RNA sequence: GGGAACGACUCGAGUAGAGUCGAAAAAGUGUCGGAAGGGCAGCUGCGGUAGCGGCAGCCUGCGGGGGACACUGUCACCAGAUUCUUGGUGCGAUGUUUUAGGUCGAGUAGCAGGUAAAGCUGCCGGGCUCCCCUCAGGUUUCGACCUGAGGGGAGCAAAAGAAACAACAACAACAAC
Reactivity to 2A3 in 0.01 (KOAc 150mM, MgCl2 10mM, bicine 150mM(pH8.5), 24C), signal-to-noise 1, nucleotides 027 to 126: a030g100u090g090u040c040g000g020a100a030g000g090g060c000a020g040c040u020g110c000g140g130u240a070g040c080g000g000c000a000g070c010c000u000g000c000g000g120g030g050g000a000c000a040c050u080g110u170c040a000c000c000a010g140a220u300u250c070u030u030g000g000u090g000c000g140a050u050g150u130u050u000u120a010g050g030u000c000g070a040g060u180a000g060c040a040g070g080u230a160a060a050g000c000u000g000c000c090g000g040